[RMDB]
RNA sequence: GGGAACGACUCGAGUAGAGUCGAAAAUUGAAGGUAAAACAGCCUGUGGGUGAAACACACCCACAGGGCCCAUUGGGCGAUAGCACUCUGGUAUCACGGUACCUUUGUGCGCCUGUUUUACCGAAGGCCGCCUGAUCCUUCGGGAUCAGGAAAAGAAACAACAACAACAAC
Reactivity to 2A3 in 0.01 (KOAc 150mM, MgCl2 10mM, bicine 150mM(pH8.5), 24C), signal-to-noise 8, nucleotides 027 to 129: u100u100g070a070a000g010g000u010a000a000a000a000c000a000g000c010c000u010g000u010g000g000g000u010g020a030a140a000c150a020c000a010c050c000c000a000c000a010g000g000g020c000c000c000a010u300u300g000g000g000c030g070a130u200a120g010c000a000c000u010c000u000g000g010u010a010u010c020a040c210g130g010u010a000c000c000u000u000u000g000u000g000c000g000c010c000u000g000u000u000u000u010a000c000c000g000a000a010g050g020c010c020g010
Reactivity to DMS in 0.01 (KOAc 150mM, MgCl2 10mM, bicine 150mM(pH8.5), 24C), signal-to-noise 4, nucleotides 027 to 129: u050u080g010a140a090g070g030u000a010a010a010a000c030a000g030c000c000u000g020u000g000g000g090u000g030a060a100a070c300a230c020a060c010c000c000a010c020a010g000g000g000c040c030c010a060u050u080g020g000g060c030g000a000u060a100g030c000a010c020u030c010u030g010g060u020a030u000c060a090c300g060g010u000a010c020c020u020u000u030g010u020g020c020g030c030c020u050g010u000u000u000u000a000c000c000g030a090a080g000g030c020c030g020
This 170-nucleotide RNA was probed chemically with 2A3 and DMS. The DMS profile rests on 23,858 reads. DMS adducts were read by reverse transcription with MarathonRT.